[RMDB]
RNA sequence: GGGAACGACUCGAGUAGAGUCGAAAAUCUGGUUGCGAAGUCUUCGCCUCGUUUUUCAAGGAUGUACCACGCGUCGUUGAUGAACUCGACGUAGUACGGGUUCUGCCUAAUGUGUACGCGAUAUCCGCCUGCUCAUUCGAUUCGUCGAAUGAGCAGGAAAAGAAACAACAACAACAAC
Reactivity to 2A3 in 0.01 (KOAc 150mM, MgCl2 10mM, bicine 150mM(pH8.5), 24C), signal-to-noise 1, nucleotides 027 to 126: u070c030u060g100g030u120u110g020c020g040a030a080g200u050c060u070u010c060g030c020c030u000c040g080u070u030u000u030u130c070a110a180g010g000a010u020g020u120a130c090c000a100c060g000c010g000u020c020g020u070u040g060a080u110g020a040a050c000u040c000g020a040c040g140u140a050g020u100a050c000g020g000g000u050u000c000u020g070c050c040u110a060a060u080g060u040g060u130a000c010g010c050g000a010u000a010u060c010c000g030
Reactivity to DMS in 0.01 (KOAc 150mM, MgCl2 10mM, bicine 150mM(pH8.5), 24C), signal-to-noise 2, nucleotides 027 to 126: u000c050u000g000g020u000u010g020c040g010a070a160g010u000c240u000u000c060g020c010c070u000c100g000u000u000u020u010u010c070a080a150g000g010a040u010g020u000a100c180c120a200c030g000c040g030u000c040g020u000u000g010a090u000g000a010a050c000u010c000g000a050c030g020u010a110g010u010a050c000g020g000g000u000u000c000u000g010c210c100u000a020a040u010g010u000g020u000a020c020g020c050g000a110u000a080u000c010c000g000
Annotation:
An RNA of 177 nucleotides, treated with 2A3 and DMS and read out base by base. 2A3 adducts were read by reverse transcription with SuperScript II with manganese. Reactivities are given for positions 27 through 126. For DMS, 1,696 sequencing reads were counted. The 2A3 profile rests on 820 reads.